[RMDB]
RNA sequence: GGGAACGACUCGAGUAGAGUCGAAAACGAAACAGUUCGCUGUUUCGAAAAAGCGUACUACUGCGACGAAGAACAUGGACCCUUGGUAUCCCAAAUAGGAUACGACCAAGCCAUGGGAGUCGCAGUAUCGCAAAAAACAACUGGUUCGCCAGUUGAACUAAUCGUACUGAUUCGUCAGUACGAUUAGAAAAGAAACAACAACAACAAC
Reactivity to DMS in 0.01 (KOAc 150mM, MgCl2 10mM, bicine 150mM(pH8.5), 24C), signal-to-noise 4, nucleotides 027 to 156: c040g000a060a020a040c020a040g000u000u000c140g070c030u000g040u010u010u000c020g000a020a080a080a130a240g030c020g010u000a110c160u000a010c000u000g000c010g000a030c000g000a150a180g010a120a170c010a010u000g000g020a150c070c070c020u000u000g040g030u000a080u000c010c000c010a040a140a200u000a040g000g010a030u000a020c050g010a020c030c000a060a130g020c020c000a050u000g000g010g010a210g010u000c000g000c000a010g000u000a000u000c020g030c020a000a050a090a130a100a080c010a010a020c000u010g010g010u000u010c300g050c010c000a020g000u010u000g010a070a240
Reactivity to 2A3 in 0.01 (KOAc 150mM, MgCl2 10mM, bicine 150mM(pH8.5), 24C), signal-to-noise 5, nucleotides 027 to 156: c030g000a010a010a000c020a010g050u120u130c190g070c150u010g000u000u000u000c000g050a050a010a000a020a000g040c040g030u090a090c050u000a000c000u010g000c010g020a000c010g220a270a080g020a070a020c000a000u000g020g050a120c080c110c000u010u010g030g000u010a010u030c000c030c040a200a300a040u230a090g000g000a000u030a090c050g030a030c050c020a010a010g030c000c000a000u000g010g010g000a040g000u000c000g000c000a000g000u000a000u000c000g000c000a090a000a000a110a020a020c010a000a000c010u010g000g040u050u080c200g060c080c000a000g000u000u000g000a030a000

Conditions: 150 mM KOAc, 10 mM MgCl2 and 150 mM bicine (pH 8.5), 24 C. Structure probing data (DMS and 2A3) for a 207-nucleotide construct.